[RMDB]
An RNA of 177 nucleotides, treated with 2A3 and DMS and read out base by base.
In probing experiments dimethyl sulfate is read out at A N1 and C N3, which are open when not base-paired.
Source: RMDB library TTRDES, as collected in RNAgym.
For 2A3 the reverse transcriptase was SuperScript II with manganese.
For DMS the reverse transcriptase was MarathonRT.
The reactions ran in a buffer of 150 mM KOAc, 10 mM MgCl2 and 150 mM bicine (pH 8.5), at 24 C.
RNA sequence: GGGAACGACUCGAGUAGAGUCGAAAAGAUAUGGAACGACUGUAGACAGCAACAGCCAUAGUCGGAAACGACUAUGGACAUGCUGUUAUUCGUUCCUAAGUCAAAAUCCGGGAGUUCGCUCCCGGAACGUGUUAAAGUUCUUCGGAACUUUAACACGAAAAGAAACAACAACAACAAC
Reactivity to 2A3 in 0.01 (KOAc 150mM, MgCl2 10mM, bicine 150mM(pH8.5), 24C), signal-to-noise 3, nucleotides 027 to 126: g020a030u070a020u160g000g020a010a000c000g070a040c140u170g160u300a160g090a190c010a010g000c030a100a120c040a200g020c010c000a000u010a000g010u010c030g020g010a060a050a030c000g000a000c000u010a010u000g000g000a000c000a010u060g000c000u000g010u030u020a030u050u000c000g000u000u000c000c000u010a120a020g040u030c050a060a060a010a300u000c000c000g000g010g000a020g000u120u210c290g010c120u000c000c030c000g000g000a000a000
Reactivity to DMS in 0.01 (KOAc 150mM, MgCl2 10mM, bicine 150mM(pH8.5), 24C), signal-to-noise 3, nucleotides 027 to 126: g020a040u010a300u010g000g000a000a000c020g000a040c300u000g030u010a200g000a040c000a000g010c000a040a080c300a220g000c000c000a020u000a020g020u010c010g040g000a080a160a150c010g030a010c000u000a000u000g000g010a020c080a100u000g020c000u000g000u010u000a040u020u000c000g020u000u010c000c000u000a000a110g000u000c070a080a070a090a110u000c000c000g010g010g010a020g030u000u000c270g000c010u000c000c000c000g010g000a010a020